Source: RMDB library TTRDEL, as collected in RNAgym. An RNA of 177 nucleotides, treated with 2A3 and DMS and read out base by base. For DMS the reverse transcriptase was MarathonRT. High DMS reactivity at an A or C suggests that its Watson-Crick edge is free. Conditions: 150 mM KOAc, 10 mM MgCl2 and 150 mM bicine (pH 8.5), 24 C.
RNA sequence: GGGAACGACUCGAGUAGAGUCGAAAAGAUAUGGAGCAGCGGUAAUUCCACAAUUCGGAAACGAAUUAAGUGGUGCCAGCUGUCUCCUAAGUCAAAACAGAUUAGGUGCUUCGGCACCUAAUCUGAACUCAUUGGAGUAGUUCGCUACUCCAAUGAGAAAAGAAACAACAACAACAAC
Reactivity to 2A3 in 0.01 (KOAc 150mM, MgCl2 10mM, bicine 150mM(pH8.5), 24C), signal-to-noise 3, nucleotides 027 to 126: g010a020u030a010u060g000g000a000g000c010a010g000c010g070g000u100a240a180u300u060c000c000a000c010a010a020u020u010c000g020g010a020a010a020c000g000a000a000u090u030a300a060g010u000g010g020u080g000c000c020a030g030c000u000g040u050c010u030c010c000u000a030a000g000u000c000a000a000a120a180c010a000g010a000u010u010a010g000g000u020g000c020u050u200c300g070g000c000a010c000c000u000a000a000u000c000u000g010a000a000
Reactivity to DMS in 0.01 (KOAc 150mM, MgCl2 10mM, bicine 150mM(pH8.5), 24C), signal-to-noise 2, nucleotides 027 to 126: g000a020u000a100u010g010g000a040g010c000a010g000c000g000g000u000a100a090u010u010c000c000a000c000a040a010u010u000c000g020g020a040a000a050c000g020a020a010u000u010a070a170g050u000g000g030u000g020c020c000a100g020c000u000g000u010c000u000c000c000u000a000a100g000u000c020a070a050a130a280c000a010g010a020u000u000a000g010g010u010g000c000u000u000c180g030g000c010a000c000c000u010a000a000u000c000u000g000a060a090